The record gives the reactivity of an RNA of 177 nucleotides to DMS. For DMS, 914 sequencing reads were counted. For DMS the reverse transcriptase was MarathonRT. It was measured as part of the RMDB library TTRDES.
RNA sequence: GGGAACGACUCGAGUAGAGUCGAAAAGAUAUGGAUGUACAAGCUCGAUAAGCUCGGGUCGGAAACGACCUAGAGCUUUUGACGAGCGGGGUACAUCCUAAGUCAAAGGUUAUCUUCGGAUAACCAACAAGCUCAAAAUCUUCGGAUUUUGAGCUUGAAAAGAAACAACAACAACAAC
Reactivity to DMS in 0.01 (KOAc 150mM, MgCl2 10mM, bicine 150mM(pH8.5), 24C), signal-to-noise 1, nucleotides 027 to 126: g000a070u000a300u010g030g000a010u000g010u000a000c010a300a160g010c020u000c010g040a120u010a010a000g000c010u000c000g010g000g080u000c000g000g000a160a100a150c010g000a010c000c010u000a080g010a010g000c000u000u000u000u000g040a200c080g000a060g020c010g000g000g030g000u000a020c020a000u000c000c000u000a040a100g010u000c010a060a080a210g060g020u010u000a000u010c000u000u030c220g010g000a020u000a000a010c000c000a160a100